[RMDB]
RNA sequence: GGGAACGACUCGAGUAGAGUCGAAAACGCAAGACAGUGAGUGGACGGAACAAAUCCCCUUCCCACCUCCCCACUGUCCACUCACUGUCUUCCUAAGAGGAAAUAUAAAUCGGGGGUGGGAAGGGGAACUAUCAUACGGAUUCGUCCGUAUGAUAGUAAAAGAAACAACAACAACAAC
Reactivity to DMS in 0.01 (KOAc 150mM, MgCl2 10mM, bicine 150mM(pH8.5), 24C), signal-to-noise 2, nucleotides 027 to 126: c300g000c170a130a060g020a030c000a000g040u000g000a010g040u030g000g000a000c030g010g000a160a060c190a080a200a110u020c020c000c010c000u000u010c000c000c000a000c020c020u000c020c000c120c130a030c050u000g000u010c010c000a000c000u010c000a000c000u000g000u010c000u000u010c020c000u000a090a060g030a150g010g000a050a090a120u020a120u070a050a100a130u030c190g010g010g010g020g010u000g000g000g000a020a000g010g020g010g040a080
Reactivity to 2A3 in 0.01 (KOAc 150mM, MgCl2 10mM, bicine 150mM(pH8.5), 24C), signal-to-noise 8, nucleotides 027 to 126: c120g040c070a070a020g000a000c000a010g000u000g000a010g000u000g000g010a000c020g030g040a100a020c040a060a100a090u120c000c000c010c000u000u000c010c000c000a000c000c000u050c060c090c020c030a070c030u030g000u000c000c000a000c000u010c000a000c000u000g010u000c000u000u010c000c000u030a030a010g060a050g130g220a020a130a010u300a040u090a060a130a050u220c110g010g000g000g000g000u000g000g000g000a000a000g000g000g000g000a000